[RMDB]
RNA sequence: GGGAACGACUCGAGUAGAGUCGAAAAGGGGAUGCACUGGUUUCGACGGGGAGUACAAAGUUUAGGAUGCAUGUCGUGCCUGAAUGAUGCACGUAAAUCUUUAUUUCAAUUUGUUAUAGUUGCAAACGACGAUAACUACGCUCUAGCGGCUUAAUCCGAAAUACACUCCGUUCGCGGAGUGUAUUUCAAAAGAAACAACAACAACAAC
Reactivity to 2A3 in 0.01 (KOAc 150mM, MgCl2 10mM, bicine 150mM(pH8.5), 24C), signal-to-noise 2, nucleotides 027 to 156: g000g000g020g040a040u080g000c080a020c200u120g000g060u150u140u170c010g060a050c000g020g050g000g010a050g020u000a080c070a040a100a010g000u020u010u110a040g000g000a020u060g030c020a010u060g070u110c000g000u000g000c000c000u000g020a020a020u080g000a030u110g000c000a000c020g030u060a010a000a000u000c020u000u030u090a040u000u040u010c040a010a040u090u020u050g040u000u030a080u030a120g000u010u020g010c030a060a000a000c080g020a000c000g020a040u000a060a010c100u150a030c060g000c020u020c020u050a000g000c000g000g000c020u030u050a040a010u060c050c070
Reactivity to DMS in 0.01 (KOAc 150mM, MgCl2 10mM, bicine 150mM(pH8.5), 24C), signal-to-noise 1, nucleotides 027 to 156: g010g010g030g030a050u010g000c060a110c050u010g010g000u000u000u010c030g010a080c100g000g020g050g010a290g000u000a090c020a050a050a170g030u000u000u000a150g000g010a100u010g000c030a180u010g030u000c040g030u000g050c000c000u050g020a010a030u010g030a120u000g000c000a040c020g020u010a020a070a050u000c050u000u000u020a080u030u000u000c000a120a100u020u000u000g010u000u000a060u000a110g010u010u000g030c010a050a070a140c080g020a000c010g000a180u010a030a080c070u010a050c030g000c060u000c220u000a140g000c020g000g010c040u000u010a060a150u000c100c140